Chemical mapping of a 177-nucleotide RNA with 2A3. For 2A3 the reverse transcriptase was SuperScript II with manganese. The reactions ran in a buffer of 150 mM KOAc, 10 mM MgCl2 and 150 mM bicine (pH 8.5), at 24 C. Source: RMDB library OK1LIB, as collected in RNAgym.

RNA sequence: GGGAACGACUCGAGUAGAGUCGAAAAUCUGAGCUACUGGCGAUCAAUCUGCUGGAGCAGUUGUUGCUCAGACGUAUGGCGGUAAUUAAUGAGUCGUUGCACCCGCCGAUGGAUAGCCGUGUGCGCGGUCGUGCGGUGCGUUCGCGCACCGCACGACAAAAGAAACAACAACAACAAC
Reactivity to 2A3 in 0.01 (KOAc 150mM, MgCl2 10mM, bicine 150mM(pH8.5), 24C), signal-to-noise 1, nucleotides 027 to 126: u000c000u000g000a000g000c050u050a000c010u130g080g080c070g130a140u050c010a150a140u070c060u140g130c030u090g070g050a130g000c030a060g030u060u060g090u140u000g020c000u000c000a000g000a000c000g210u130a100u140g010g000c060g090g000u070a010a000u060u040a140a220u140g000a000g030u030c000g050u020u000g000c030a100c000c000c020g000c080c060g050a190u070g000g050a120u020a200g060c020c010g000u010g010u000g130c150g000c000g070